[RMDB]
Notes: Structure probing data (DMS and 2A3) for a 207-nucleotide construct. Reactivities are given for positions 27 through 156.
RNA sequence: GGGAACGACUCGAGUAGAGUCGAAAAGCGGGGCUUGAAACGCGGGUAGCGCUCACGCCCGGCGAAGAAGUUCGCAUACGCGGUGUGCUGGUGCCGAAGUGUCUGCUGCAACGGCACGCUCGACACCUAGAACAUACCGUAUUCGUACGGUAUGUAAGUUAAAGACAAACUUCGGUUUGUCUUUAACAAAAGAAACAACAACAACAAC
Reactivity to DMS in 0.01 (KOAc 150mM, MgCl2 10mM, bicine 150mM(pH8.5), 24C), signal-to-noise 3, nucleotides 027 to 156: g030c020g040g020g070g020c010u000u010g000a050a040a030c030g010c010g020g070g010u010a180g040c030g040c020u000c050a060c120g000c010c010c010g030g050c010g010a050a260g000a130a210g000u000u000c000g000c040a110u010a100c060g010c090g030g010u000g010u000g000c000u000g010g010u000g020c010c000g000a050a150g010u010g000u000c070u010g020c060u010g020c120a100a220c080g020g000c000a020c010g020c070u000c000g010a060c020a020c020c010u000a130g010a110a060c000a020u010a000c000c000g020u000a030u000u000c200g020u000a030c020g020g010u010a010u000g010u000a000a070
Reactivity to 2A3 in 0.01 (KOAc 150mM, MgCl2 10mM, bicine 150mM(pH8.5), 24C), signal-to-noise 5, nucleotides 027 to 156: g030c030g010g010g000g020c030u040u050g020a050a070a030c040g010c030g060g090g090u190a050g030c010g000c010u000c010a010c000g000c010c010c000g000g010c010g010a020a030g070a050a020g110u100u110c040g000c050a030u070a170c080g010c080g140g000u030g020u040g070c060u070g010g010u020g000c010c020g030a090a040g050u050g030u100c080u080g080c060u080g020c070a060a050c020g010g000c010a000c020g030c050u020c020g020a010c000a020c000c020u040a060g020a060a000c000a000u010a010c000c000g000u000a010u020u050c120g070u020a010c010g000g000u000a000u010g020u000a010a020

For 2A3 the reverse transcriptase was SuperScript II with manganese.